[RMDB]
RNA sequence: GGGAACGACUCGAGUAGAGUCGAAAAACAGUAUGACGUACGCGUCAUACUGAACCUAUGAUGAAAUUAAUUGGUCCGUGUUUAUGAAUUUAUAUUGAUUAAAAACCUUCCAAUUACUGAGAAAAAACCUACUCGCUGUUUUCGAACAGCGAGUAGGAAAAGAAACAACAACAACAAC
Reactivity to 2A3 in 0.01 (KOAc 150mM, MgCl2 10mM, bicine 150mM(pH8.5), 24C), signal-to-noise 2, nucleotides 027 to 126: a010c000a020g000u000a000u010g000a000c000g030u040a040c150g000c000g170u000c000a000u000a010c000u000g000a000a000c000c000u090a120u160g220a060u000g040a060a000a210u050u000a040a030u010u010g000g040u080c120c000g060u050g100u130u010u040a110u100g010a130a020u000u180u000a200u060a160u230u180g050a070u030u000a000a110a000a050a050c000c000u060u080c000c080a000a000u020u040a040c040u130g020a030g140a080a100a000a070a000a000